Background:
Structure probing data (DMS and 2A3) for a 177-nucleotide construct. Conditions: 150 mM KOAc, 10 mM MgCl2 and 150 mM bicine (pH 8.5), 24 C.

RNA sequence: GGGAACGACUCGAGUAGAGUCGAAAAAAAAGAUAUGGAGCCACAUUCGCAACAGCUAAUGGUGGUGUCGGAAACGACACGUAACAUCCAUUAGACAUGCGACCUCGGGUGGCUCCUAAGUCAAAAACCAAGAUUAUUAGUUCGCUAAUAAUCUUGGAAAAGAAACAACAACAACAAC
Reactivity to DMS in 0.01 (KOAc 150mM, MgCl2 10mM, bicine 150mM(pH8.5), 24C), signal-to-noise 4, nucleotides 027 to 126: a090a070a110a120g010a050u000a300u010g000g000a030g020c000c010a010c010a240u010u000c010g030c030a020a090c300a170g000c000u000a000a000u000g000g030u000g000g000u000g000u000c000g020g000a110a070a180c030g010a010c000a010c000g010u000a020a030c160a030u010c020c010a000u000u000a010g000a040c070a250u010g000c020g000a020c300c160u000c150g020g010g030u000g000g000c010u000c000c010u000a000a040g000u000c040a070a090a130a060a100
Reactivity to 2A3 in 0.01 (KOAc 150mM, MgCl2 10mM, bicine 150mM(pH8.5), 24C), signal-to-noise 2, nucleotides 027 to 126: a000a000a000a030g030a020u080a030u100g000g000a010g000c000c000a010c010a060u040u000c020g000c020a080a200c050a300g050c000u010a020a000u000g030g000u000g020g000u000g010u000c030g010g020a080a060a010c000g000a000c000a000c010g030u030a030a010c020a280u090c000c010a000u000u000a010g030a040c050a060u140g010c030g020a030c020c090u250c140g300g020g010u010g000g000c000u000c000c000u000a000a000g020u000c010a020a010a000a070a190